[RMDB]
RNA sequence: GGGAACGACUCGAGUAGAGUCGAAAAAAAUUGCGGGAAAUGUCCAGGACGAAAUGGGAUACCAAGCACGGCAGCACACGUCAUUCGUGCUGGAGUGUGGCCGAGUUAAUGCACUCGGGUAAGGUAACAACUCCCAGUUCGAUAGGAUUGACCUGCACUUAAGAGAACGGUUCGCCGUUCUCUUAAGAAAAGAAACAACAACAACAAC
Reactivity to DMS in 0.01 (KOAc 150mM, MgCl2 10mM, bicine 150mM(pH8.5), 24C), signal-to-noise 1, nucleotides 027 to 156: a080a050a200u020u010g010c020g000g000g000a150a110a160u010g000u010c000c000a110g070g000a300c070g010a000a010a040u000g000g000g000a080u000a000c000c000a250a150g010c040a000c020g000g000c010a060g000c000a020c000a130c130g020u000c120a170u010u010c060g020u000g000c040u000g010g000a140g000u000g020u000g000g000c040c010g000a010g000u000u020a060a180u010g030c220a110c020u020c020g020g000g040u020a030a070g000g000u000a070a050c060a000a070c160u030c000c000c000a020g010u020u000c000g000a130u000a140g010g020a040u000u000g000a300c000c000u000g040c090a080
Reactivity to 2A3 in 0.01 (KOAc 150mM, MgCl2 10mM, bicine 150mM(pH8.5), 24C), signal-to-noise 3, nucleotides 027 to 156: a000a000a040u180u050g000c040g000g000g010a100a300a040u060g000u000c000c000a020g130g140a040c020g000a010a010a010u020g000g000g000a000u020a000c030c150a010a000g000c000a000c040g250g000c090a000g020c000a000c000a010c030g240u170c090a240u230u140c130g000u000g010c000u000g000g030a070g000u010g000u050g000g000c000c000g000a000g000u010u100a060a090u230g000c020a000c000u010c010g000g000g000u030a120a010g000g000u000a000a000c000a000a000c010u000c000c000c000a000g000u000u000c000g020a030u070a060g000g000a000u000u020g000a020c000c000u000g000c000a000
The record gives the reactivity of an RNA of 207 nucleotides to DMS and 2A3. For DMS, 1,565 sequencing reads were counted. Source: RMDB library RSTRND, as collected in RNAgym. The reactions ran in a buffer of 150 mM KOAc, 10 mM MgCl2 and 150 mM bicine (pH 8.5), at 24 C.